Source information
Source: RMDB library M2PK90, as collected in RNAgym. Structure probing data (2A3 and DMS) for a 177-nucleotide construct. For DMS the reverse transcriptase was MarathonRT. The reactions ran in a buffer of 150 mM KOAc, 10 mM MgCl2 and 150 mM bicine (pH 8.5), at 24 C.
RNA sequence: GGGAACGACUCGAGUAGAGUCGAAAAUGAAAGACUAGGAAACUCGAAUAAAUAAGUGGUAAUGCUAGCGAAUCCACGGCGAGGAAACUAGGACACUAACCAUGUGAUCCCGGACGCUAGAAAAAAACAAUCCAAUAUACUUCGGUAUAUUGGAUUGAAAAGAAACAACAACAACAAC
Reactivity to 2A3 in 0.01 (KOAc 150mM, MgCl2 10mM, bicine 150mM(pH8.5), 24C), signal-to-noise 2, nucleotides 027 to 126: u110g030a060a050a020g060a040c020u020a010g000g090a140a140a030c010u030c030g040a090a090u230a290a200a050u170a300a070g010u010g030g000u030a060a010u100g090c010u010a000g040c000g020a010a030u050c000c000a000c000g050g000c010g020a010g020g070a050a020a070c010u010a000g000g020a010c000a000c010u050a070a040c020c030a050u100g020u000g040a060u030c000c020c000g050g070a020c020g000c010u020a010g000a130a010a010a000a000a000a010
Reactivity to DMS in 0.01 (KOAc 150mM, MgCl2 10mM, bicine 150mM(pH8.5), 24C), signal-to-noise 3, nucleotides 027 to 126: u000g020a080a080a120g010a230c010u000a020g000g010a100a150a260c000u000c010g010a090a110u000a080a130a130u010a090a080g010u000g000g000u000a100a060u010g010c000u000a010g000c000g020a260a150u000c000c010a010c010g010g020c010g010a020g000g000a040a070a110c020u000a030g000g000a200c020a000c040u010a030a150c250c210a040u000g000u000g010a150u000c000c010c000g010g000a120c070g010c010u010a010g020a020a000a020a070a040a040a100